[RMDB]
RNA sequence: GGGAACGACUCGAGUAGAGUCGAAAAGUUAUGCUCUCGCUGCCUAAUGGCGGUGCGGGAAACCCACUCUAAAGUCCUUAGGGUUAGCCCCUUAAGGCGGGGUUCGGAGGCACCUGGCAACAGCAGCUGAAACUGUGCACAUUCGUGUGCACAGUAAUCAGUCAGAAAAGUUCGCUUUUCUGACUGAAAAAGAAACAACAACAACAAC
Reactivity to 2A3 in 0.01 (KOAc 150mM, MgCl2 10mM, bicine 150mM(pH8.5), 24C), signal-to-noise 3, nucleotides 027 to 156: g060u100u040a090u270g030c000u010c000u020c040g000c000u020g000c000c020u240a300a270u140g050g040c070g000g020u020g010c010g020g060g040a070a040a040c030c000c010a070c050u210c080u170a150a140a160g220u150c000c000u000u000a000g010g010g040u020u090a030g000c000c000c000c030u030u020a000a000g000g010c000g010g010g000g000u020u110c060g120g020a040g160g000c000a010c010c040u080g120g010c010a040a010c010a040g030c010a000g000c020u050g020a100a010a010c000u000g000u000g000c000a000c000a000u030u040c150g080u020g000u000g040c000a000c000a000g000u000a000a000
Reactivity to DMS in 0.01 (KOAc 150mM, MgCl2 10mM, bicine 150mM(pH8.5), 24C), signal-to-noise 2, nucleotides 027 to 156: g020u000u010a060u010g020c000u000c040u010c050g010c010u000g020c010c020u040a210a160u000g020g040c020g030g040u010g030c040g000g020g000a050a040a080c000c010c050a130c070u000c020u000a080a140a110g020u000c030c030u000u000a010g000g000g020u000u000a200g000c250c220c000c010u000u000a020a020g020g100c000g010g030g010g030u010u000c070g000g030a220g020g000c050a020c020c010u000g000g030c040a070a090c070a070g020c020a080g020c030u000g020a110a110a040c010u000g000u000g030c000a020c000a090u000u000c300g020u000g020u000g040c000a000c000a010g010u000a020a090
Background
This 207-nucleotide RNA was probed chemically with 2A3 and DMS. The DMS profile rests on 3,910 reads.